This 177-nucleotide RNA was probed chemically with DMS and 2A3. High DMS reactivity at an A or C suggests that its Watson-Crick edge is free. The 2A3 profile rests on 2,659 reads. It was measured as part of the RMDB library 15KREP. The reactions ran in a buffer of 150 mM KOAc, 10 mM MgCl2 and 150 mM bicine (pH 8.5), at 24 C. For DMS, 8,129 sequencing reads were counted.
RNA sequence: GGGAACGACUCGAGUAGAGUCGAAAAGUAGUGUCUACACUAAUAGCUGCCUUGUAUCGUCUGAUGGACAACCUGGCGGUGAUGCUAUUAGUUUGAGUUUUAAUAACCUUUUAGGGUUUGAUUCUAGCAUAAUGAAUUGCUUCGGCAAUUCAUUAUGAAAAGAAACAACAACAACAAC
Reactivity to DMS in 0.01 (KOAc 150mM, MgCl2 10mM, bicine 150mM(pH8.5), 24C), signal-to-noise 5, nucleotides 027 to 126: g010u000a070g010u000g010u010c020u000a070c120a060c010u000a010a000u000a010g010c000u000g000c010c000u000u000g000u000a090u010c180g000u000c010u010g020a180u020g010g000a020c010a090a060c010c040u000g000g010c000g020g020u010g010a060u020g010c000u000a000u000u000a000g010u000u000u000g010a090g020u000u010u010u000a070a140u010a040a030c010c000u000u000u000u010a140g010g000g000u000u000u000g000a140u000u000c020u000a090g000
Reactivity to 2A3 in 0.01 (KOAc 150mM, MgCl2 10mM, bicine 150mM(pH8.5), 24C), signal-to-noise 4, nucleotides 027 to 126: g060u070a010g070u040g050u170c040u030a030c010a010c040u000a010a000u000a010g010c060u070g000c010c000u050u040g060u070a150u100c050g040u000c030u070g200a170u300g130g030a010c000a000a030c000c000u000g000g000c030g060g020u110g030a020u150g000c010u000a010u000u000a000g010u000u030u100g020a010g020u040u080u060u070a140a160u100a040a010c010c000u030u130u060u290a160g020g020g040u040u020u050g040a060u030u050c020u040a020g050